Structure probing data (2A3) for a 207-nucleotide construct. It was measured as part of the RMDB library OK3TST. The 2A3 profile rests on 516 reads. 2A3 adducts were read by reverse transcription with SuperScript II with manganese.
RNA sequence: GGGAACGACUCGAGUAGAGUCGAAAACUUAAUUAUAACGAUAACGUCAUUAAUUAUAACGGAUUAAGUCGCUACAAUAACUCUAUUUUUAUCGUUGAUGAGGCACAUAAUAUUUUUGGGAAUAAUACUGGAGAACUUAUGACCGUGAUAAAAAAUAGCAGAAUACUAACUUCGGUUAGUAUUCUGCAAAAGAAACAACAACAACAAC
Reactivity to 2A3 in 0.01 (KOAc 150mM, MgCl2 10mM, bicine 150mM(pH8.5), 24C), signal-to-noise 1, nucleotides 027 to 156: c000u050u040a040a100u100u110a110u060a270a030c010g010a030u030a040a040c050g030u010c100a030u060u250a160a030u180u060a130u030a140a030c050g020g000a000u060u000a030a000g010u020c060g080c100u100a070c040a050a110u070a170a040c020u030c030u140a260u000u070u000u030u070a030u040c030g030u060u040g030a040u020g040a060g060g050c000a010c000a100u160a190a050u080a120u130u120u050u100u220g030g000g010a020a000u130a080a000u100a120c040u040g000g010a040g040a060a000c000u040u020a030u050g070a040c040c080g000u010g060a020u190a060a000a100a000a010a000u200a080